Structure probing data (2A3) for a 207-nucleotide construct.
RNA sequence: GGGAACGACUCGAGUAGAGUCGAAAAGUGUCCCGGGAGACCUACCUCGGGCACCUGCUGACCCUGUACCGCGAGGCCAUCGGGCAGACCCAGGUGGACGAGCACACCUUCCAGGAGAUCACCAGCGUGAGCCGCGCGCUGGGGCAGGAGGACACGGCAUCGAAGGAUACUUCGGUAUCCUUCGAUGAAAAGAAACAACAACAACAAC
Reactivity to 2A3 in 0.01 (KOAc 150mM, MgCl2 10mM, bicine 150mM(pH8.5), 24C), signal-to-noise 1, nucleotides 027 to 156: g030u040g010u020c000c000c000g010g070g000a050g020a110c070c050u150a110c030c030u090c020g050g060g100c040a030c000c020u040g030c070u120g150a300c020c000c020u120g030u120a090c020c000g020c030g080a040g000g090c010c020a070u150c030g010g000g000c020a010g030a190c010c000c020a000g000g000u030g010g080a050c040g030a030g030c090a010c000a010c040c000u040u110c030c010a060g090g010a080g060a110u140c020a030c080c000a000g030c000g010u000g070a060g120c060c060g110c040g010c000g000c060u040g000g010g010g040c080a050g030g100a080g020g000a010c010a000c020g000g020